The record gives the reactivity of an RNA of 207 nucleotides to 2A3 and DMS. Reactivities are rounded to 0.1 and cut off at 0 and 3. It was measured as part of the RMDB library M2RFPK. The RNA was probed in 150 mM KOAc, 10 mM MgCl2 and 150 mM bicine (pH 8.5) at 24 C. The DMS profile rests on 2,407 reads.

RNA sequence: GGGAACGACUCGAGUAGAGUCGAAAAGAAAGAAAGAAAGCGGUUGGGUGGGUCCAUCGACCGUCGUGGCGUAUUCGGACGCUUUACCACGACGCAAGGAAAUAGCGAGACCGACCACCCCCUUUAACAGAGGUAUAGUAGUUCGCUACUAUACCAACACAUUGGUAUGGUUCGCCAUACCAAUGUGAAAAGAAACAACAACAACAAC
Reactivity to 2A3 in 0.01 (KOAc 150mM, MgCl2 10mM, bicine 150mM(pH8.5), 24C), signal-to-noise 3, nucleotides 027 to 156: g040a010a120a000g060a000a100a000g050a020a040a010g090c130g060g030u180u120g100g000g030u060g050g010g000u030c050c020a080u050c020g030a050c030c020g000u010c000g000u000g010g010c040g000u090a170u050u160c050g140g080a030c040g040c030u060u040u100a040c020c010a000c000g000a000c010g000c050a030a070g040g050a030a130a060u060a040g070c020g010a060g020a070c020c020g060a050c030c000a000c000c000c000c000c000u000u080u090a100a050c090a030g080a040g150g000u010a010u000a000g000u000a000g010u010u080c200g010c120u000a000c000u000a000u000a000c000c000a000a000
Reactivity to DMS in 0.01 (KOAc 150mM, MgCl2 10mM, bicine 150mM(pH8.5), 24C), signal-to-noise 2, nucleotides 027 to 156: g050a170a040a130g000a180a140a190g010a120a170a100g010c170g010g000u000u030g000g010g000u000g000g010g020u000c060c000a070u000c060g010a160c180c000g030u000c030g040u010g000g000c000g020u010a130u000u010c050g020g010a200c080g000c030u000u000u010a050c000c010a030c010g000a060c000g000c040a010a130g020g000a040a100a070u010a080g020c000g010a160g010a120c040c040g010a070c020c000a050c010c000c010c020c040u030u020u010a070a090c090a150g000a230g000g000u000a000u000a010g010u000a010g000u000u000c300g040c010u000a030c010u000a000u000a000c010c020a020a110